[RMDB]
The record gives the reactivity of an RNA of 177 nucleotides to 2A3 and DMS. Source: RMDB library OK1LIB, as collected in RNAgym. The RNA was probed in 150 mM KOAc, 10 mM MgCl2 and 150 mM bicine (pH 8.5) at 24 C.
RNA sequence: GGGAACGACUCGAGUAGAGUCGAAAACGCGGUAGAAGCGAUCGCGACGGCGACCGGGAUGAACCUGACCACGGCAUCGGCGAAUCUGCAGGCGCUGAAGAGCGGCGGGCUGGUCGAGGCUCGCCGCGGCCGGAAGGAGAUUCGUCUCCUUCCGGCCAAAAGAAACAACAACAACAAC
Reactivity to 2A3 in 0.01 (KOAc 150mM, MgCl2 10mM, bicine 150mM(pH8.5), 24C), signal-to-noise 3, nucleotides 027 to 126: c020g010c010g030g030u100a050g060a300a030g050c040g040a060u040c030g010c000g060a070c010g030g010c010g040a060c010c040g000g010g010a040u050g040a030a070c010c010u050g060a090c050c000a050c030g070g000c010a030u040c060g040g000c060g030a060a080u040c020u090g010c020a050g030g010c010g000c030u050g070a120a050g070a030g100c000g000g000c000g000g000g010c000u060g040g090u150c070g080a060g010g010c000u010c010g000c010c010g000c000
Reactivity to DMS in 0.01 (KOAc 150mM, MgCl2 10mM, bicine 150mM(pH8.5), 24C), signal-to-noise 2, nucleotides 027 to 126: c040g010c000g010g070u010a050g010a210a090g000c040g000a030u020c020g020c030g000a160c080g000g010c040g000a080c090c020g000g000g000a080u020g010a080a090c020c000u040g000a130c030c020a100c080g000g040c050a170u000c040g030g040c040g000a120a050u000c000u020g000c080a130g000g000c060g010c110u030g000a040a120g030a220g000c010g040g000c010g000g000g000c000u000g000g020u030c100g000a080g000g100c000u000c000g000c010c010g010c000